[RMDB]
RNA sequence: GGGAACGACUCGAGUAGAGUCGAAAACAAGCCGAAGACGGGUAGCGGGUGUGAGAGCACGACCCGCGACAUCGGGACUGAGACACUGCCCGGACUCCUACGGGAGGCUGCAGCAACGAAUCUUCCGCAAGUGAUAUGUGUUCGCACAUAUCACUUGAAAAGAAACAACAACAACAAC
Reactivity to DMS in 0.01 (KOAc 150mM, MgCl2 10mM, bicine 150mM(pH8.5), 24C), signal-to-noise 4, nucleotides 027 to 126: c090a110a090g010c030c010g010a060a100g010a210c080g000g000g020u010a060g030c040g020g000g030u000g010u010g020a200g020a190g020c020a060c020g000a040c020c000c000g000c010g000a050c120a060u000c030g020g000g020a130c070u000g010a150g000a120c110a070c070u000g000c020c130c020g010g000a070c040u000c010c010u000a140c190g010g010g000a060g010g020c010u000g000c130a050g010c090a040a070c100g010a060a140u000c030u000u000c050c110g020
Reactivity to 2A3 in 0.01 (KOAc 150mM, MgCl2 10mM, bicine 150mM(pH8.5), 24C), signal-to-noise 3, nucleotides 027 to 126: c020a000a030g090c030c010g050a050a000g110a090c100g010g000g090u050a030g010c030g000g080g000u050g010u040g050a300g020a030g200c020a000c030g150a060c010c010c000g000c000g010a010c000a040u040c010g010g000g060a050c050u060g030a030g010a060c040a000c040u030g010c000c020c000g040g010a060c020u040c000c010u040a060c160g060g010g000a010g000g000c020u060g000c000a030g020c000a000a060c040g040a040a070u030c040u070u010c020c030g000
Notes
Conditions: 150 mM KOAc, 10 mM MgCl2 and 150 mM bicine (pH 8.5), 24 C. Chemical mapping of a 177-nucleotide RNA with DMS and 2A3. As a SHAPE reagent, 2A3 marks flexible, mostly unpaired nucleotides at the ribose 2'-OH. It was measured as part of the RMDB library RFMREP. For 2A3, 4,299 sequencing reads were counted.